[RMDB]
RNA sequence: GGGAACGACUCGAGUAGAGUCGAAAAUGACGUCGUUUCGACGACGUCAACAUAAAAUCAGGGGUAAAUAAUUAGGAGGCGUUACCGCUGAACGCCUCCAUACGAGAGGGCUAUUCGUAGCCCUCAAUCUAAGGUUGUAGUUCGCUACAACCUUAGAAAAAGAAACAACAACAACAAC
Reactivity to DMS in 0.01 (KOAc 150mM, MgCl2 10mM, bicine 150mM(pH8.5), 24C), signal-to-noise 5, nucleotides 027 to 126: u000g010a010c000g020u000c000g020u010u000u010c170g020a020c000g020a010c010g000u000c000a020a060c160a060u010a070a060a070a070u000c080a060g010g010g000g010u000a090a100a100u010a050a110u010u000a160g020g010a010g000g010c000g020u000u010a050c050c150g010c080u000g010a020a010c000g010c010c000u000c000c000a010u000a020c260g000a170g010a010g010g010g020c000u000a020u000u020c170g000u000a020g000c000c000c000u000c000a010a040
Reactivity to 2A3 in 0.01 (KOAc 150mM, MgCl2 10mM, bicine 150mM(pH8.5), 24C), signal-to-noise 5, nucleotides 027 to 126: u060g010a000c000g000u010c010g000u000u080u120c220g070a010c000g020a000c000g010u010c010a000a010c010a000u200a030a120a040a070u150c080a040g020g030g030g040u070a030a120a100u150a090a210u200u230a120g010g010a000g000g000c010g010u020u020a080c020c080g020c100u070g020a000a000c000g000c000c010u000c000c000a000u050a000c030g020a040g000a000g020g010g000c000u010a020u040u140c220g080u020a000g000c000c000c000u000c000a010a010
About this RNA
Chemical mapping of a 177-nucleotide RNA with DMS and 2A3. 2A3 adducts were read by reverse transcription with SuperScript II with manganese. Conditions: 150 mM KOAc, 10 mM MgCl2 and 150 mM bicine (pH 8.5), 24 C.